[RMDB]
RNA sequence: GGGAACGACUCGAGUAGAGUCGAAAAGUGACACGGGCAGCAUGGGAAUAGUCCUUCCUGAACCCUGGAAAGGAGCUCCUGCCAGCCUUGCACACACUUUGUCCUGGUGAAAGGCAGCCCUGGAGCAGACGGUAGCAGGUUUCGACCUGCUACCGUCAAAAGAAACAACAACAACAAC
Reactivity to DMS in 0.01 (KOAc 150mM, MgCl2 10mM, bicine 150mM(pH8.5), 24C), signal-to-noise 1, nucleotides 027 to 126: g000u000g030a200c170a080c200g010g000g010c000a130g020c050a170u000g000g000g000a030a110u010a140g000u000c000c070u000u000c010c000u000g000a150a240c170c090c020u000g000g000a020a020a010g040g000a070g000c070u000c020c030u000g020c080c000a150g000c050c000u010u010g000c030a070c170a200c050a040c070u000u000u000g020u000c090c010u020g030g030u000g030a050a090a010g000g010c010a140g040c050c060c050u000g000g010a030g000c070a130
The record gives the reactivity of an RNA of 177 nucleotides to DMS. The data come from the RNA Mapping Database (RMDB), library OK2TRN.